[RMDB]
RNA sequence: GGGAACGACUCGAGUAGAGUCGAAAAGAAUUCUGGGUGGCUCUGGCUAUCGGGAGCCUUCAUUGAUUACAGCAAAACAGUUGCUUUCCUAGGGCAAUAGUGUCUCUGUCACCCAGGCUGGAGUUCAGUGGCAUGAUCAAUCGCUCACUGUAGCCUAGAUAUACUACCUAUUCGUAGGUAGUAUAUCAAAAGAAACAACAACAACAAC
Reactivity to DMS in 0.01 (KOAc 150mM, MgCl2 10mM, bicine 150mM(pH8.5), 24C), signal-to-noise 2, nucleotides 027 to 156: g000a100a110u000u010c030u010g000g020g030u000g010g010c000u000c050u000g010g030c040u000a060u010c080g010g020g010a230g070c030c030u000u000c030a080u000u000g030a120u000u000a130c030a110g010c060a080a080a140a140c140a180g010u000u010g000c010u000u000u010c050c060u000a120g000g030g040c010a050a120u000a060g010u010g030u000c020u000c060u010g020u000c000a050c000c000c020a040g020g000c030u000g000g000a110g030u000u000c020a070g030u000g010g010c060a140u010g020a130u000c100a070a120u000c120g030c000u010c020a040c010u000g030u000a060g010c010c020u000a240
Reactivity to 2A3 in 0.01 (KOAc 150mM, MgCl2 10mM, bicine 150mM(pH8.5), 24C), signal-to-noise 4, nucleotides 027 to 156: g040a020a090u110u120c010u020g010g020g000u020g000g000c010u040c080u100g060g010c020u050a060u130c110g080g050g040a030g030c000c060u030u110c080a050u060u080g070a030u110u170a070c060a020g040c030a020a050a060a130c040a160g170u060u000g010c020u050u100u110c020c060u070a120g000g000g000c020a030a010u040a060g070u050g080u080c020u010c030u080g010u000c000a000c000c000c000a010g000g010c000u020g030g020a160g050u070u080c010a000g010u020g020g000c020a030u070g060a140u240c130a120a030u060c090g020c040u150c010a030c010u010g030u050a020g010c000c010u000a020
The record gives the reactivity of an RNA of 207 nucleotides to DMS and 2A3. For DMS, 4,552 sequencing reads were counted. Conditions: 150 mM KOAc, 10 mM MgCl2 and 150 mM bicine (pH 8.5), 24 C. It was measured as part of the RMDB library OK3TST. 2A3 is a SHAPE reagent: it acylates the 2'-hydroxyl of flexible nucleotides of all four kinds. For DMS the reverse transcriptase was MarathonRT. For 2A3, 2,360 sequencing reads were counted.